[RMDB]
The record gives the reactivity of an RNA of 207 nucleotides to 2A3 and DMS. The RNA was probed in 150 mM KOAc, 10 mM MgCl2 and 150 mM bicine (pH 8.5) at 24 C. Reactivities are given for positions 27 through 156. For 2A3 the reverse transcriptase was SuperScript II with manganese. For DMS the reverse transcriptase was MarathonRT.
RNA sequence: GGGAACGACUCGAGUAGAGUCGAAAAUUUGAAGCACCUGCUGCUGGUGGUGCUGCAUUACAAUUACCUACUUGGAUAACAACGAGGGGAACUGUUAUGACGAGGGAUACGGCUUGGCACGAUGUAGACAUUUCGGGAACUUAUGGGGCUGAGAAACCAACAACCUAGGAUUCGUCCUAGGUUGUUGAAAAGAAACAACAACAACAAC
Reactivity to 2A3 in 0.01 (KOAc 150mM, MgCl2 10mM, bicine 150mM(pH8.5), 24C), signal-to-noise 3, nucleotides 027 to 156: u070u030u070g040a010a000g010c010a020c040c010u110g040c060u040g020c020u030g080g000u060g030g000u020g010c000u010g010c000a000u090u110a080c060a070a100u110u060a130c010c000u080a140c040u060u050g030g030a040u060a140a040c080a040a010c110g010a040g000g030g000g000a020a030c030u010g040u080u070a070u150g030a020c040g020a060g010g030g000a010u060a090c040g000g020c010u010u030g060g000c020a010c090g040a050u090g040u060a040g050a070c040a050u110u100u040c040g020g000g000a020a000c000u060u030a050u190g000g030g000g000c010u010g010a010g050a110a010a000c040
Reactivity to DMS in 0.01 (KOAc 150mM, MgCl2 10mM, bicine 150mM(pH8.5), 24C), signal-to-noise 2, nucleotides 027 to 156: u020u000u010g000a090a080g000c020a050c030c010u000g050c010u020g020c020u050g030g030u000g010g070u000g060c000u030g020c000a050u000u000a070c080a080a130u000u010a120c010c000u000a100c100u000u010g020g000a130u000a120a080c130a110a050c040g020a080g000g040g010g000a100a090c180u000g020u000u020a060u000g020a100c090g000a090g010g000g000a120u000a070c090g020g000c000u000u000g030g020c020a040c040g020a060u000g000u010a070g000a060c080a140u010u010u000c070g000g030g020a050a010c050u000u000a060u000g010g020g040g010c000u020g020a090g020a100a090a150c140